The record gives the reactivity of an RNA of 177 nucleotides to DMS and 2A3.
RNA sequence: GGGAACGACUCGAGUAGAGUCGAAAAGAUAUGGACCCGGGUAGGCAUCGAUCGUACGGGAUCGGAAACGAUCUUACGGGAGCCUACAGGGUCCUAAGUCAAAGCUGUAUACUUCGGUAUACAGCAACAUCAUAGUUCCGUUCGCGGAACUAUGAUGAAAAGAAACAACAACAACAAC
Reactivity to DMS in 0.01 (KOAc 150mM, MgCl2 10mM, bicine 150mM(pH8.5), 24C), signal-to-noise 4, nucleotides 027 to 126: g010a010u000a020u010g000g000a010c000c000c000g000g070g060u000a010g020g020c010a300u010c260g000a010u020c010g000u000a030c300g000g000g000a000u000c000g020g010a010a010a040c010g010a000u000c000u000u000a000c010g010g000g010a010g020c000c000u000a010c010a220g000g000g010u000c000c000u000a000a030g000u000c010a130a110a160g010c000u010g010u000a000u000a000c000u000u040c240g030g000u000a010u000a010c000a010g000c000a030a080
Reactivity to 2A3 in 0.01 (KOAc 150mM, MgCl2 10mM, bicine 150mM(pH8.5), 24C), signal-to-noise 2, nucleotides 027 to 126: g000a000u020a010u050g000g000a000c040c020c040g110g290g030u020a000g010g000c020a080u300c280g010a000u000c010g010u010a020c150g100g050g020a000u000c000g020g000a000a020a000c000g000a000u020c000u000u000a000c010g010g000g000a020g000c000c000u020a010c010a010g010g010g000u010c000c000u000a010a000g000u000c010a030a080a200g000c000u000g000u000a000u010a010c010u040u050c300g130g000u010a000u000a000c010a000g000c000a000a020